[RMDB]
RNA sequence: GGGAACGACUCGAGUAGAGUCGAAAAAGUGGGUUACAGGAGACCUUCAAUGAGUCUAAUCAGGGAGGGACCGGGAAGGAUGGUAUCAUCCCUGGGCGGGCUCCAACGUGAGGGCUGUGUGGCUGAGCAGUGCAAAGACCUCCAUCCUACACUCCACUGAAUAGUGUGAGUUCGCUCACACUAUUCAAAAAGAAACAACAACAACAAC
Reactivity to 2A3 in 0.01 (KOAc 150mM, MgCl2 10mM, bicine 150mM(pH8.5), 24C), signal-to-noise 2, nucleotides 027 to 156: a010g010u050g000g060g010u060u090a040c040a090g040g010a030g030a090c000c000u030u010c080a100a160u080g020a030g020u050c020u060a070a070u040c040a010g000g000g080a090g050g060g010a030c060c010g000g000g080a110a030g130g040a090u130g030g000u150a140u280c050a060u010c010c000c010u050g010g000g040c100g040g000g000c010u020c060c020a060a110c070g040u070g030a020g010g070g000c040u000g040u040g000u020g080g110c060u030g050a010g010c000a000g010u040g020c030a100a130a000g010a070c000c000u050c030c010a040u030c020c020u030a040c020a000c030u040c000c060a070c060